[RMDB]
RNA sequence: GGGAACGACUCGAGUAGAGUCGAAAACGACUUACCUUCGGGUAAGUCGACAUAGGUGAGUUCAUCGCAUAGCUGCCUAGGUGAGUUCAUCGGAUAGCUGCCACAUGUAACGGUUCGCCGUUACAAACCAUACCCACUGGUUCGCCAGUGGGUAUGGAAAAGAAACAACAACAACAAC
Reactivity to DMS in 0.01 (KOAc 150mM, MgCl2 10mM, bicine 150mM(pH8.5), 24C), signal-to-noise 3, nucleotides 027 to 126: c020g010a030c000u000u000a000c000c000u000u030c210g010g020g020u000a000a010g010u000c000g000a030c140a050u010a090g010g000u000g000a050g020u000u000c040a020u000c040g020c090a110u000a120g000c090u000g000c060c260u000a120g010g010u000g000a050g000u000u000c000a010u000c010g000g010a080u000a100g010c080u000g000c040c020a050c210a090u000g020u000a010a000c010g000g010u000u010c190g010c000c000g010u000u000a000c020a010a080a110
Reactivity to 2A3 in 0.01 (KOAc 150mM, MgCl2 10mM, bicine 150mM(pH8.5), 24C), signal-to-noise 4, nucleotides 027 to 126: c000g010a000c000u010u010a010c000c010u030u070c250g040g000g000u000a000a010g000u000c000g000a010c000a050u140a040g060g000u020g030a020g000u030u030c020a010u040c050g010c060a040u110a150g060c080u090g040c050c080u050a080g030g000u020g010a020g000u030u020c020a020u030c020g020g040a090u100a050g070c050u060g060c030c010a090c020a110u100g010u000a000a000c010g000g060u050u050c240g020c060c000g000u020u000a000c000a000a020a000

Source: RMDB library M2PK50, as collected in RNAgym. Chemical mapping of a 177-nucleotide RNA with DMS and 2A3. 2A3 adducts were read by reverse transcription with SuperScript II with manganese. Values cover nucleotides 27 to 126. The reactions ran in a buffer of 150 mM KOAc, 10 mM MgCl2 and 150 mM bicine (pH 8.5), at 24 C. For DMS, 2,875 sequencing reads were counted.